[RMDB]
RNA sequence: GGGAACGACUCGAGUAGAGUCGAAAAGGAGAUCGAAGAAGACCGACGUCAGCACGGUCAGGAUGUAGGUCCGCAUGCAUCCGAGUUGACGAAACUUUACGAUUUCCAAAGCGGACAAGAAGUCAAAACUCGCGUAGGGAUUCGUCCCUACGCGAGUAAAAGAAACAACAACAACAAC
Reactivity to 2A3 in 0.01 (KOAc 150mM, MgCl2 10mM, bicine 150mM(pH8.5), 24C), signal-to-noise 1, nucleotides 027 to 126: g010g010a010g000a000u050c080g030a170a000g130a100a000g000a090c000c000g050a050c040g040u260c000a030g070c300a010c040g080g000u050c000a020g040g000a020u010g020u000a000g020g040u010c000c000g000c000a000u000g000c000a000u000c000c000g000a000g040u000u000g090a070c100g010a040a070a000c000u040u040u010a020c000g000a000u000u000u000c000c000a160a010a040g000c000g030g020a000c000a020a000g080a030a060g070u080c040a000a030a070

About this RNA
Source: RMDB library OK1LIB, as collected in RNAgym. An RNA of 177 nucleotides, treated with 2A3 and read out base by base. Values are in units of 0.01, from 0 to 300, in steps of 10. The RNA was probed in 150 mM KOAc, 10 mM MgCl2 and 150 mM bicine (pH 8.5) at 24 C.